[RMDB]
Structure probing data (DMS and 2A3) for a 177-nucleotide construct. It was measured as part of the RMDB library OK1LIB.

RNA sequence: GGGAACGACUCGAGUAGAGUCGAAAAUUGGACCAGCACAUGUCCCAGCCGUAUGAAGAAUUGGAACGGAAGCUCCAAAAGAGAGACGAGGAACAGCGUCAGCUCGCCAUUGACAGCGCCAACCUGCCUGGUGGAUGCAAUUCGUUGCAUCCACCAGAAAAGAAACAACAACAACAAC
Reactivity to DMS in 0.01 (KOAc 150mM, MgCl2 10mM, bicine 150mM(pH8.5), 24C), signal-to-noise 3, nucleotides 027 to 126: u010u050g000g000a040c030c080a100g010c040a180c090a130u000g010u000c000c000c020a170g010c030c000g060u000a140u000g010a170a120g040a110a170u020u020g000g040a080a070c080g000g000a100a190g010c060u000c000c040a010a020a120a060g020a070g030a120g000a060c120g000a030g000g010a050a180c120a080g000c080g000u010c030a080g010c060u000c060g010c090c110a100u000u010g000a090c040a040g010c000g000c000c050a070a070c020c040u020g020c170
Reactivity to 2A3 in 0.01 (KOAc 150mM, MgCl2 10mM, bicine 150mM(pH8.5), 24C), signal-to-noise 3, nucleotides 027 to 126: u090u080g070g020a030c020c010a040g030c040a040c010a080u030g010u030c000c000c000a010g040c010c000g100u120a070u140g050a070a150g020a060a100u050u070g060g010a030a000c000g000g040a050a000g030c010u010c030c010a040a050a060a010g120a010g000a010g000a010c030g010a030g010g080a090a090c010a040g000c000g040u030c000a010g000c000u020c020g020c010c030a080u020u080g070a020c000a020g000c010g000c020c000a000a050c010c020u070g060c040
The DMS profile rests on 2,266 reads.
Conditions: 150 mM KOAc, 10 mM MgCl2 and 150 mM bicine (pH 8.5), 24 C.